Structure probing data (2A3 and DMS) for a 177-nucleotide construct. The DMS profile rests on 1,300 reads. The reactions ran in a buffer of 150 mM KOAc, 10 mM MgCl2 and 150 mM bicine (pH 8.5), at 24 C. 2A3 adducts were read by reverse transcription with SuperScript II with manganese.
RNA sequence: GGGAACGACUCGAGUAGAGUCGAAAAGCGAUUGAAUAGGUACUUCUUUUCGAAUGAUUUCGCGCCGGACUUGCGGUUCACGGUGAUGGCGCGGGCGUCUCUGUCAUCGUAGCUGAUAUUUUGGAAGAGUAUCAGGGACGUUCGCGUCCCUGAUACUAAAAGAAACAACAACAACAAC
Reactivity to 2A3 in 0.01 (KOAc 150mM, MgCl2 10mM, bicine 150mM(pH8.5), 24C), signal-to-noise 3, nucleotides 027 to 126: g000c010g060a070u140u210g050a080a110u080a110g100g070u090a190c000u080u040c020u010u120u050u090c040g030a100a070u140g090a060u040u040u110c010g000c000g020c030c010g050g000a020c030u040u200g060c090g010g140u080u100c020a020c110g020g120u070g020a110u050g040g060c020g000c000g030g030g000c030g010u000c020u000c060u060g020u010c000a040u010c050g070u050a010g030c020u000g030a080u000a180u180u080u140u040g090g080a100a120g000
Reactivity to DMS in 0.01 (KOAc 150mM, MgCl2 10mM, bicine 150mM(pH8.5), 24C), signal-to-noise 1, nucleotides 027 to 126: g000c170g010a040u000u040g030a040a040u030a010g000g020u040a150c110u040u000c040u040u000u000u000c020g030a030a130u030g000a100u010u000u020c070g040c160g050c060c000g000g000a120c090u000u040g020c150g000g000u010u060c080a050c010g010g060u070g040a110u010g020g000c040g000c010g020g000g010c040g010u010c000u020c040u040g000u010c020a000u000c060g080u000a000g000c020u000g000a040u030a110u080u000u000u000g000g010a050a190g000